[RMDB]
This 177-nucleotide RNA was probed chemically with DMS and 2A3. The reactions ran in a buffer of 150 mM KOAc, 10 mM MgCl2 and 150 mM bicine (pH 8.5), at 24 C. For 2A3, 3,123 sequencing reads were counted. Reactivities are given for positions 27 through 126. For DMS, 2,579 sequencing reads were counted.

RNA sequence: GGGAACGACUCGAGUAGAGUCGAAAAUCUAAUGUCUUCGGACAUUAGAAAAGGCGGAGGCUCGCACCUAGCGACCGGCGCAAGGACGCAGGUGACUGCGAAAAAUCACCGAGUUCGCUCGGUGAAACUUUGGAACAAAGUUCGCUUUGUUCCAAAGAAAAGAAACAACAACAACAAC
Reactivity to DMS in 0.01 (KOAc 150mM, MgCl2 10mM, bicine 150mM(pH8.5), 24C), signal-to-noise 3, nucleotides 027 to 126: u000c010u000a000a000u000g000u010c000u000u020c220g030g010a000c010a000u000u000a010g010a020a060a090a100g000g020c030g000g010a180g010g010c180u010c040g030c030a100c110c160u000a110g010c010g010a030c010c020g000g010c060g010c070a130a100g000g010a110c010g010c000a010g000g010u000g000a140c030u000g000c000g000a020a060a070a120a130u000c000a000c000c000g010a010g000u000u000c200g010c000u000c010g000g000u000g000a020a040a040
Reactivity to 2A3 in 0.01 (KOAc 150mM, MgCl2 10mM, bicine 150mM(pH8.5), 24C), signal-to-noise 2, nucleotides 027 to 126: u030c000u000a000a010u000g010u000c000u010u040c120g100g010a010c000a000u000u030a000g000a020a130a000a010g120g000c020g050g160a060g040g030c070u030c050g040c010a060c030c160u030a050g010c020g010a010c000c010g030g120c040g010c050a040a030g090g010a030c000g000c000a010g000g030u060g060a090c010u010g000c020g020a000a080a000a030a060u010c000a000c010c000g000a000g010u050u070c160g010c090u010c000g000g000u000g010a000a000a000